Background
This 177-nucleotide RNA was probed chemically with 2A3 and DMS. DMS adducts were read by reverse transcription with MarathonRT. The RNA was probed in 150 mM KOAc, 10 mM MgCl2 and 150 mM bicine (pH 8.5) at 24 C.
RNA sequence: GGGAACGACUCGAGUAGAGUCGAAAAUUAACCAUAUUAACAUUUGUUGCUUUUCACACGGUAGUAAAUAUGGUGUUGAAAGGAGGAGACGGGCGGGCGCAGUGGCUCAUGCCUGUAAUCCCAGCACUAUACGAUACUGAUUCGUCAGUAUCGUAUAAAAAGAAACAACAACAACAAC
Reactivity to 2A3 in 0.01 (KOAc 150mM, MgCl2 10mM, bicine 150mM(pH8.5), 24C), signal-to-noise 5, nucleotides 027 to 126: u080u040a030a050c010c010a030u060a120u150u130a110a060c070a110u090u090u220g060u050u090g030c040u080u060u090u110c040a030c030a020c050g100g020u050a040g010u040a040a130a150u070a020u050g120g010u030g050u080u100g050a090a080a060g050g040a080g010g030a050g010a020c050g000g020g010c000g030g000g000c030g000c080a110g100u170g160g000c010u000c060a040u160g000c000c000u020g010u030a010a050u010c000c000c010a000g030c030a020c040
Reactivity to DMS in 0.01 (KOAc 150mM, MgCl2 10mM, bicine 150mM(pH8.5), 24C), signal-to-noise 9, nucleotides 027 to 126: u010u010a120a190c020c010a070u010a060u010u000a080a100c080a120u010u010u010g020u000u000g010c040u000u000u000u000c090a060c030a020c030g010g010u000a040g010u000a060a060a090u000a010u000g010g030u000g010u000u000g010a030a050a060g010g010a130g010g000a110g010a060c050g010g010g030c010g000g000g010c030g020c090a140g020u000g010g010c010u000c030a050u010g030c000c000u000g010u000a050a100u000c000c000c020a110g010c140a070c170